[RMDB]
RNA sequence: GGGAACGACUCGAGUAGAGUCGAAAAUCACUCUUCGGAGUGAAAAAAGAUAUGGAGAAGGCUGGUGAGGUUCGGAAACGAACCCACUUUCGAGCCCUCCUAAGUCAAAAAGAUGGUUCGCCAUCAACAUUUAUCUCAGGUUCGCCUGAGAUAAAUGAAAAGAAACAACAACAACAAC
Reactivity to 2A3 in 0.01 (KOAc 150mM, MgCl2 10mM, bicine 150mM(pH8.5), 24C), signal-to-noise 1, nucleotides 027 to 126: u010c020a000c010u000c030u030u090c300g260g030a060g020u070g000a170a010a000a000a010a000g070a040u100a040u120g000g010a020g020a300a180g090g000c020u030g080g000u010g010a270g010g000u010u020c030g000g040a060a020a050c010g000a000a000c000c000c010a020c000u060u100u170c110g030a000g000c030c000c010u000c000c010u010a160a010g020u040c050a000a000a000a060a190g030a020u020g030g090u070u090c260g020c140c010a040u000c040a000a010
Reactivity to DMS in 0.01 (KOAc 150mM, MgCl2 10mM, bicine 150mM(pH8.5), 24C), signal-to-noise 2, nucleotides 027 to 126: u000c000a000c000u000c000u000u020c200g020g020a020g060u000g020a010a050a050a150a080a090g000a070u010a300u010g000g000a050g040a120a100g010g020c010u020g000g020u000g010a160g020g010u010u000c000g000g000a100a040a170c020g000a010a010c000c000c020a010c000u010u000u010c190g050a070g020c010c020c000u010c010c010u010a050a120g010u020c040a080a080a070a100a110g000a020u020g000g010u000u020c220g020c000c000a030u000c020a170a160